[RMDB]
RNA sequence: GGGAACGACUCGAGUAGAGUCGAAAAUGAAAUCUUUUCUGAUAGGCAUAAAUCCAGUGACUAAGCUUAUAUCAGCCGCUGGUGAGCUGACUCUAACAAGUUAAGCCUGGCAGUACCUCCGGUGAAAAAUAUCAUUGAUAUUCGUAUCAAUGAUAUUAAAAGAAACAACAACAACAAC
Reactivity to 2A3 in 0.01 (KOAc 150mM, MgCl2 10mM, bicine 150mM(pH8.5), 24C), signal-to-noise 4, nucleotides 027 to 126: u090g020a050a060a010u090c040u030u100u070u030c020u060g040a090u060a050g020g000c030a040u060a140a100a050u060c010c000a020g020u010g050a050c040u040a060a010g030c020u120u120a110u050a040u300c040a010g000c000c010g030c030u030g000g030u020g010a010g000c020u020g020a020c000u000c010u030a070a050c050a060a020g010u040u040a050a000g000c000c000u000g040g000c020a010g020u030a050c000c010u010c030c020g060g010u080g060a070a110a040
Reactivity to DMS in 0.01 (KOAc 150mM, MgCl2 10mM, bicine 150mM(pH8.5), 24C), signal-to-noise 9, nucleotides 027 to 126: u010g000a090a100a100u000c060u000u000u000u000c040u000g010a090u000a060g010g010c020a080u000a070a130a120u000c010c020a030g010u000g000a040c050u000a070a110g010c170u010u010a110u010a110u010c090a030g020c030c020g010c040u000g010g010u000g010a120g010c050u000g010a040c060u000c040u010a060a100c160a060a050g000u000u000a070a130g010c020c010u000g010g000c050a050g010u000a080c050c030u000c070c040g010g010u000g000a020a070a070

This 177-nucleotide RNA was probed chemically with 2A3 and DMS. For 2A3, 10,375 sequencing reads were counted. For 2A3 the reverse transcriptase was SuperScript II with manganese. Values are in units of 0.01, from 0 to 300, in steps of 10. The data come from the RNA Mapping Database (RMDB), library OK2TST. Reactivities are given for positions 27 through 126.